[RMDB]
RNA sequence: GGGAACGACUCGAGUAGAGUCGAAAAGGGCUUUUUUCCACUAAAUGUCUACACUGACCUGGGGUGUGGCCAAGGAAGGUAGAUGAUGGGUCAUGUGGCCAUGCCCGCUGGCCUGCAUGGAGGAGGAUAGAUCAAAUGGUUUCGACCAUUUGAUCUAAAAAGAAACAACAACAACAAC
Reactivity to DMS in 0.01 (KOAc 150mM, MgCl2 10mM, bicine 150mM(pH8.5), 24C), signal-to-noise 6, nucleotides 027 to 126: g010g010g000c040u000u000u000u000u000u000c020c020a130c150u000a070a080a090u010g010u010c010u000a070c070a090c080u000g000a130c040c040u000g000g000g010g010u010g010u010g010g000c020c030a060a080g000g010a300a050g010g010u000a050g000a050u000g000a110u000g010g000g010u000c060a070u010g010u000g000g020c010c030a030u000g010c020c000c010g030c300u000g000g000c010c010u000g010c040a060u000g010g000a070g000g000a090g000g000a200
Reactivity to 2A3 in 0.01 (KOAc 150mM, MgCl2 10mM, bicine 150mM(pH8.5), 24C), signal-to-noise 3, nucleotides 027 to 126: g030g000g020c050u040u120u020u020u100u060c030c010a040c080u130a080a090a110u160g030u010c010u050a040c140a030c100u130g080a200c010c040u030g040g010g000g000u070g040u050g050g040c020c010a050a020g060g030a050a030g040g010u080a040g020a100u110g040a050u100g040g050g030u060c040a030u140g020u060g040g000c010c000a030u030g020c000c000c000g040c040u010g010g020c030c020u030g030c020a040u090g000g040a030g020g010a030g040g030a060
Background
This 177-nucleotide RNA was probed chemically with DMS and 2A3. For 2A3 the reverse transcriptase was SuperScript II with manganese. DMS adducts were read by reverse transcription with MarathonRT. Reactivities are given for positions 27 through 126.